[RMDB]
RNA sequence: GGGAACGACUCGAGUAGAGUCGAAAAGGGGUCUUUACGGUUCGAUUCAGGGAGCUUGGAUUUAAUGGCUGAAGCCUCCACGGCCAUUUGUCAGCUCCCUAGAUCGAGCCGUAAAGACGGAGGCACCCAAAGAUGUAGGGCUUCGGCCCUACAUCAACCAGUAACUUGAGUUCGCUCAAGUUACUGGAAAAGAAACAACAACAACAAC
Reactivity to 2A3 in 0.01 (KOAc 150mM, MgCl2 10mM, bicine 150mM(pH8.5), 24C), signal-to-noise 2, nucleotides 027 to 156: g070g000g020g010u010c020u000u010u000a030c020g000g000u010u010c000g000a000u170u100c050a030g010g020g000a030g010c070u130u220g200g000a080u290u300u210a030a000u000g000g000c010u010g050a100a040g010c010c020u020c020c040a030c000g000g000c020c000a010u000u000u000g000u030c000a000g000c000u030c080c000c000u030a000g000a010u010c010g000a000g010c000c000g000u000a000a000a000g000a000c000g000g000a000g030g000c020a070c030c000c020a070a050a020g000a010u000g000u000a000g000g000g000c000u020u050c220g080g000c000c020c000u000a000c000a000u000c000a000a010
Chemical mapping of a 207-nucleotide RNA with 2A3. 2A3 adducts were read by reverse transcription with SuperScript II with manganese.